[RMDB]
This 177-nucleotide RNA was probed chemically with 2A3 and DMS. As a SHAPE reagent, 2A3 marks flexible, mostly unpaired nucleotides at the ribose 2'-OH. The reactions ran in a buffer of 150 mM KOAc, 10 mM MgCl2 and 150 mM bicine (pH 8.5), at 24 C. Values cover nucleotides 27 to 126. For 2A3, 32,310 sequencing reads were counted. The data come from the RNA Mapping Database (RMDB), library OK1LIB. DMS adducts were read by reverse transcription with MarathonRT.

RNA sequence: GGGAACGACUCGAGUAGAGUCGAAAAAGUGUAGCAACUAGGACGGCGGGGCGUUUCGGAGAUGAAUGGGCGUCCUCGCAGAGCUGCAGAGGUUUUCCUGUCCGCGUUGCAGGGUCUACUCUGUGAGGCGGCGUGCGUCGUUCGCGAUGUGUGCCGCAAAAGAAACAACAACAACAAC
Reactivity to 2A3 in 0.01 (KOAc 150mM, MgCl2 10mM, bicine 150mM(pH8.5), 24C), signal-to-noise 6, nucleotides 027 to 126: a000g080u050g010u020a000g000c010a010a040c010u030a010g030g010a000c000g010g000c000g000g000g010g000c010g000u000u020u070c030g040g030a120g020a070u150g070a050a050u040g010g010g000c000g020u100c000c000u000c000g000c010a010g010a010g000c020u020g000c000a000g010a030g010g000u010u000u030u020c000c000u000g010u000c000c010g020c030g030u020u060g000c000a000g000g000g000u020c020u020a030c000u010c000u000g010u020g020a030g050
Reactivity to DMS in 0.01 (KOAc 150mM, MgCl2 10mM, bicine 150mM(pH8.5), 24C), signal-to-noise 9, nucleotides 027 to 126: a060g010u010g000u010a040g010c020a070a060c100u020a120g000g010a030c040g000g010c020g010g000g000g000c010g010u000u010u030c020g010g010a150g020a160u040g010a100a110u040g010g010g010c010g000u040c010c000u000c000g010c010a040g000a080g000c020u000g000c050a030g000a100g010g000u010u010u000u000c030c010u010g010u010c010c020g000c150g000u010u000g000c010a080g000g000g000u020c080u000a110c020u000c010u010g000u010g000a090g000